Structure probing data (DMS and 2A3) for a 170-nucleotide construct. The 2A3 profile rests on 20,222 reads. DMS adducts were read by reverse transcription with MarathonRT. The data come from the RNA Mapping Database (RMDB), library 15KLIB. The DMS profile rests on 17,683 reads. For 2A3 the reverse transcriptase was SuperScript II with manganese. The reactions ran in a buffer of 150 mM KOAc, 10 mM MgCl2 and 150 mM bicine (pH 8.5), at 24 C.
RNA sequence: GGGAACGACUCGAGUAGAGUCGAAAAAAGAAGACGGAUUUGCCUUCUACCCUGCUUGCACUAAUGGUCAUGCUGUACCGACUCUCUUUAGACUUAAGGGAGGUGCACCUGUAAAAAAAGUAGCCUUAACGUAGGAUCUUCGGAUCCUACAAAAGAAACAACAACAACAAC
Reactivity to DMS in 0.01 (KOAc 150mM, MgCl2 10mM, bicine 150mM(pH8.5), 24C), signal-to-noise 4, nucleotides 027 to 129: a080a020g000a060a010g000a050c060g060g010a130u040u030u040g070c000c000u020u030c000u010a110c050c020c030u020g000c100u000u000g030c010a020c010u020a080a060u000g020g030u050c040a050u060g020c020u030g050u020a000c080c040g020a230c040u010c020u010c030u000u000u000a070g030a130c130u000u000a070a070g020g040g020a030g030g040u000g030c000a100c020c010u000g000u090a000a000a050a050a030a040a040g040u040a090g010c030c050u050u060a070a080c090
Reactivity to 2A3 in 0.01 (KOAc 150mM, MgCl2 10mM, bicine 150mM(pH8.5), 24C), signal-to-noise 8, nucleotides 027 to 129: a010a020g050a010a000g030a010c050g070g050a180u060u120u270g040c000c000u000u000c000u020a080c000c000c020u050g030c040u020u040g000c020a000c030u040a050a060u120g020g040u100c020a040u080g040c050u050g040u060a050c020c050g100a090c000u010c000u010c010u040u050u050a110g070a170c040u120u100a020a020g030g000g010a020g000g040u000g010c010a020c010c030u060g090u150a090a000a000a010a010a020a080g040u050a030g040c010c030u050u060a040a040c100